[RMDB]
RNA sequence: GGGAACGACUCGAGUAGAGUCGAAAAAACGUUGCAUGAUCGUAAAACAUGCCCGGCUUACCGUGAGCCACCUUUGAAAGAAAGGUUUACACGGACUCUGUUGCGUUACGCACGUACCUAACUUGUGAAAACGGCAUCUUGUUCGCAAGAUGCCGAAGGGUCAACAUAUGUUCGCAUAUGUUGACCCAAAAGAAACAACAACAACAAC
Reactivity to 2A3 in 0.01 (KOAc 150mM, MgCl2 10mM, bicine 150mM(pH8.5), 24C), signal-to-noise 1, nucleotides 027 to 156: a000a000c000g010u000u010g050c000a030u000g020a070u120c110g020u230a030a030a000a250c000a000u000g000c000c020c000g010g000c000u030u130a120c030c000g000u000g000a010g000c000c000a000c020c000u000u000u000g180a120a070a010g160a040a030a000g050g000u000u000u090a000c000a010c000g110g000a110c090u050c080u120g020u060u030g020c030g010u020u060a100c150g000c000a000c000g070u120a080c000c000u150a060a260c030u120u090g150u030g140a040a040a040a040c000g000g000c020a000u000c000u000u000g010u040u010c060g030c070a000a040g020a000u000g040c000c000g000a010a000

Chemical mapping of a 207-nucleotide RNA with 2A3.
Values cover nucleotides 27 to 156.